[RMDB]
RNA sequence: GGGAACGACUCGAGUAGAGUCGAAAAUUCUUGAGUCUCCAUGCUUCUCUGACGUUGCAUGGAGUCUAUGUCUGGACCUUCUCCAUUUCCUCUUUCAAGAGAAUGUGAGCAUUGAAGGAUUCGGACAAGUAUACGUGAAUUUCGAUUCACGUAUACUAAAAGAAACAACAACAACAAC
Reactivity to 2A3 in 0.01 (KOAc 150mM, MgCl2 10mM, bicine 150mM(pH8.5), 24C), signal-to-noise 9, nucleotides 027 to 126: u030u010c010u020u070g050a020g010u000c000u000c000c000a000u000g010c000u030u020c060u020c180u260g160a090c200g020u000u000g000c000a000u000g010g000a000g000u000c000u010a030u030g000u000c000u000g010g000a000c000c000u010u000c010u000c010c000a010u030u050u070c060c010u020c020u080u300u120c160a200a030g010a000g010a010a010u050g090u120g040a080g040c120a200u070u180g020a010a010g010g040a050u000u010c000g000g000a000c000a000
Reactivity to DMS in 0.01 (KOAc 150mM, MgCl2 10mM, bicine 150mM(pH8.5), 24C), signal-to-noise 9, nucleotides 027 to 126: u010u000c010u000u000g010a050g010u000c000u000c000c000a000u000g000c000u000u000c000u000c190u020g020a110c210g010u000u000g000c010a000u000g000g000a010g010u000c010u000a090u010g000u000c000u000g000g000a010c000c000u000u000c000u000c040c000a010u000u000u010c130c010u000c020u000u030u040c300a120a050g000a010g010a030a010u010g010u020g000a090g020c300a100u030u020g000a020a000g000g000a130u000u000c000g000g000a010c010a040

An RNA of 177 nucleotides, treated with 2A3 and DMS and read out base by base.
It was measured as part of the RMDB libraries RFM100 and RFMREP.
For 2A3 the reverse transcriptase was SuperScript II with manganese.
DMS adducts were read by reverse transcription with MarathonRT.